Annotation: An RNA of 207 nucleotides, treated with 2A3 and read out base by base. Source: RMDB library OK3TST, as collected in RNAgym. The 2A3 profile rests on 2,724 reads.

[RMDB]
RNA sequence: GGGAACGACUCGAGUAGAGUCGAAAAACACGCACAUCUGCAUCCGUGCAUGUGCACUCAGCACAUGGAACACGCACACUCAUCUGCACCCAUGCACAUGCAGUUAGCACACGGAUCUUGCACACUCAUCUGCACCCGUGCACAUGCACUCAGCACAGUGAUAUAGUGCGUUCGCGCACUAUAUCACAAAAGAAACAACAACAACAAC
Reactivity to 2A3 in 0.01 (KOAc 150mM, MgCl2 10mM, bicine 150mM(pH8.5), 24C), signal-to-noise 4, nucleotides 027 to 156: a000c100a020c080g110c000a120c030a180u040c060u150g020c010a090u030c090c040g010u000g000c000a000u010g000u010g000c000a010c020u160c070a030g040c050a010c000a080u040g060g060a050a070c150a020c120g050c010a030c010a010c040u130c040a150u070c060u020g000c010a060c000c010c000a010u040g040c100a040c000a070u060g000c010a000g020u050u090a040g000c040a000c000a000c100g120g010a070u060c080u080u130g030c070a020c000a020c040u090c020a120u030c040u050g000c000a050c010c050c040g010u000g000c000a000c000a010u020g000c030a010c030u040c010a030g000c060a010c020a060